The record gives the reactivity of an RNA of 177 nucleotides to 2A3. For 2A3 the reverse transcriptase was SuperScript II with manganese. The reactions ran in a buffer of 150 mM KOAc, 10 mM MgCl2 and 150 mM bicine (pH 8.5), at 24 C.
RNA sequence: GGGAACGACUCGAGUAGAGUCGAAAAAGCCACGCUACGGCGUGGCAGUCCUCAAACAUUCUGGUAUUUCGCAAAUUGAAAAGCGAUACCAGUCUGGAUGAGGCUGAACGUACUAUACGUAGUACGACCUGCGCGGAUUUUUCGAAAUCCGCGCAGGAAAAGAAACAACAACAACAAC
Reactivity to 2A3 in 0.01 (KOAc 150mM, MgCl2 10mM, bicine 150mM(pH8.5), 24C), signal-to-noise 1, nucleotides 027 to 126: a000g040c000c000a010c030g000c000u160a180c300g190g000c000g000u000g000g000c000a000g080u000c010c000u030c000a060a060a000c000a000u020u020c000u000g000g000u020a010u020u300u000c040g000c000a210a290a100u110u280g120a200a120a080a010g030c000g000a000u000a010c000c000a000g000u090c000u080g010g010a000u020g000a000g000g000c000u000g100a100a000c010g000u000a000c000u020a000u030a060c300g130u030a000g000u000a000c020g000a040